This 207-nucleotide RNA was probed chemically with 2A3. It was measured as part of the RMDB library M2RFPK. The RNA was probed in 150 mM KOAc, 10 mM MgCl2 and 150 mM bicine (pH 8.5) at 24 C.

RNA sequence: GGGAACGACUCGAGUAGAGUCGAAAAGAAAGAAAGAAAGAAAUCUGACAGAAUGACGGAUUCGAUCGUUGUGGUCGUCGGGCCACCACGUCAUUCCUUCGCACUGUCUCCGGGCAGACCGCCAUAAAAAAGCGGAUCUACUUCGGUAGAUCCGCAAGCUCAGAUAAUCCUUCGGGAUUAUCUGAGCAAAAGAAACAACAACAACAAC
Reactivity to 2A3 in 0.01 (KOAc 150mM, MgCl2 10mM, bicine 150mM(pH8.5), 24C), signal-to-noise 1, nucleotides 027 to 156: g010a010a090a010g030a000a100a000g110a040a090a000g020a060a170a060u130c130u120g000a030c040a000g130a170a120u130g010a000c020g010g000a030u140u040c060g020a070u300c120g050u040u020g010u000g010g010u020c110g040u090c300g120g000g030c000c000a000c000c010a000c000g000u010c000a000u000u000c000c000u010u000c000g010c010a050c040u000g000u000c010u030c100c090g030g010g000c020a010g010a150c010c060g040c000c000a080u250a050a130a010a010a000a050g000c000g000g000a030u000c000u000a000c030u030u050c130g080g000u000a000g010a000u000c000c000g000c000a000a000